This 177-nucleotide RNA was probed chemically with DMS and 2A3.
The RNA was probed in 150 mM KOAc, 10 mM MgCl2 and 150 mM bicine (pH 8.5) at 24 C.
[RMDB]
RNA sequence: GGGAACGACUCGAGUAGAGUCGAAAAUGACUGGAAGGCGAUGGGCUACAGCCCGCAGGAUAUGGAUUUCAUCGAGGCGAAAAACGGCGCGGCGCGCGAUAUUGCGCUCGCCUUCGGCGUUCCGCCAGCUAAAUGAGCAUUUCGAUGCUCAUUUAGCAAAAGAAACAACAACAACAAC
Reactivity to DMS in 0.01 (KOAc 150mM, MgCl2 10mM, bicine 150mM(pH8.5), 24C), signal-to-noise 5, nucleotides 027 to 126: u010g010a110c030u000g010g010a060a050g010g000c040g000a070u000g020g000g020c030u010a090c200a170g010c020c010c020g040c080a050g010g010a100u010a090u010g010g010a140u000u000u010c060a060u000c070g020a110g010g030c020g010a040a060a040a080a070c110g000g000c030g010c300g010g000c020g010c110g000c090g000a180u010a130u010u010g000c000g020c010u000c020g010c000c010u000u000c020g010g010c010g000u000u000c040c020g020c060c080a140
Reactivity to 2A3 in 0.01 (KOAc 150mM, MgCl2 10mM, bicine 150mM(pH8.5), 24C), signal-to-noise 2, nucleotides 027 to 126: u070g030a050c000u050g050g020a020a020g030g000c040g050a060u080g000g070g040c010u080a080c050a090g000c010c020c000g000c040a010g070g000a010u020a060u140g080g020a060u070u110u090c040a050u060c050g030a050g020g000c020g040a060a040a030a030a050c040g100g010c010g030c030g010g030c010g000c010g000c010g040a030u060a140u230u260g010c010g000c010u010c000g020c000c000u040u030c000g020g000c010g000u010u000c030c030g000c010c010a030

Notes:
For 2A3, 2,918 sequencing reads were counted. For DMS, 3,992 sequencing reads were counted.